Structure probing data (2A3) for a 207-nucleotide construct. The reactions ran in a buffer of 150 mM KOAc, 10 mM MgCl2 and 150 mM bicine (pH 8.5), at 24 C.
RNA sequence: GGGAACGACUCGAGUAGAGUCGAAAAAGCGCGCAUGCUACGGUAUGCGCGCAAUCAGAAAUCGGGAAUGAUGUUCUCCCCUGGGAUUCCAAAACCGCUGUUUCGCUGAUGACGUCUGCUUUUUUAAUCACCACCGUUUGGUUCGCCAAACGGUGAACCUCUAAACUUCCUUCGGGAAGUUUAGAGGAAAAGAAACAACAACAACAAC
Reactivity to 2A3 in 0.01 (KOAc 150mM, MgCl2 10mM, bicine 150mM(pH8.5), 24C), signal-to-noise 1, nucleotides 027 to 156: a010g010c000g020c010g000c000a000u020g000c000u010a010c140g100g000u020a010u000g000c000g060c000g020c000a000a020u020c010a000g080a020a080a010u130c040g070g000g030a050a040u090g040a090u100g080u120u040c020u080c020c000c020c060u080g040g020g060a080u120u000c050c010a010a000a010a020c050c060g000c070u080g010u050u050u080c020g020c040u020g010a040u030g010a010c060g030u010c010u000g050c000u020u090u030u000u020u120a060a140u110c020a000c110c010a000c010c000g000u000u030u000g060g000u040u030c130g000c090c000a000a000a000c010g020g020u000g000a010a020
It was measured as part of the RMDB library M2RFPK.